RNA sequence: GGGAACGACUCGAGUAGAGUCGAAAACAGACCUAUCCGAAGAUGCGGAUCGUGUCGGCUCCGGAGCUGUCCGGCGUCCAGAUGCAGGGCCAAACGCCGGAAGACGCCCUGGUCCUCUUCGUCGAAGUCGUAUCUCGUCUUUCGAGACGAGAUACGAAAAAGAAACAACAACAACAAC
Reactivity to DMS in 0.01 (KOAc 150mM, MgCl2 10mM, bicine 150mM(pH8.5), 24C), signal-to-noise 1, nucleotides 027 to 126: c140a130g000a040c000c010u040a100u000c030c000g030a080a070g000a070u010g020c070g030g020a060u000c030g000u010g000u010c010g010g020c080u010c010c030g010g020a030g010c040u010g020u010c000c020g000g000c020g010u000c070c100a150g040a070u000g010c080a100g000g010g010c130c030a040a090a070c010g000c020c000g050g000a050a060g020a090c110g000c010c020c080u000g020g000u010c000c010u010c060u010u000c020g000u000c060g010a130a110g000
Reactivity to 2A3 in 0.01 (KOAc 150mM, MgCl2 10mM, bicine 150mM(pH8.5), 24C), signal-to-noise 1, nucleotides 027 to 126: c020a000g130a090c010c000u030a060u010c040c030g040a070a030g030a150u230g210c040g060g000a030u010c060g030u010g060u230c010g040g010c000u000c010c020g020g070a050g010c040u010g100u080c020c010g020g000c000g020u010c010c020a090g010a160u200g170c050a120g040g040g000c000c090a110a070a000c000g000c000c000g000g000a010a010g000a000c020g000c000c010c020u000g000g000u060c000c000u030c000u090u040c020g150u030c000g010a070a010g080
Chemical mapping of a 177-nucleotide RNA with DMS and 2A3. Conditions: 150 mM KOAc, 10 mM MgCl2 and 150 mM bicine (pH 8.5), 24 C. Source: RMDB library OK2TRN, as collected in RNAgym. The DMS profile rests on 1,055 reads.